This 177-nucleotide RNA was probed chemically with DMS.

[RMDB]
RNA sequence: GGGAACGACUCGAGUAGAGUCGAAAACUUGGUAUCGUCCACAGCCUGCAAAGCCUCACUAAACUUUCUGAAACAUUGAAAGAAGUGAAAAAUCACGGCGUUGAGCUAUAACGUUUAGUAGGUUCAUAUAAAACCUGAAGUUCGCUUCAGGUUUUAUAAAAGAAACAACAACAACAAC
Reactivity to DMS in 0.01 (KOAc 150mM, MgCl2 10mM, bicine 150mM(pH8.5), 24C), signal-to-noise 1, nucleotides 027 to 126: c040u000u010g040g000u000a120u020c050g010u000c040c040a050c220a110g010c010c030u000g000c030a040a110a190g000c100c100u000c050a000c000u010a100a120a060c000u000u000u000c010u000g020a270a250a160c180a130u020u030g000a020a000a020g000a100a020g000u000g000a020a070a040a030a180u010c100a060c050g020g010c030g000u010u000g000a130g020c140u000a060u000a060a070c100g020u000u000u000a050g010u000a060g000g000u000u000c100a060u000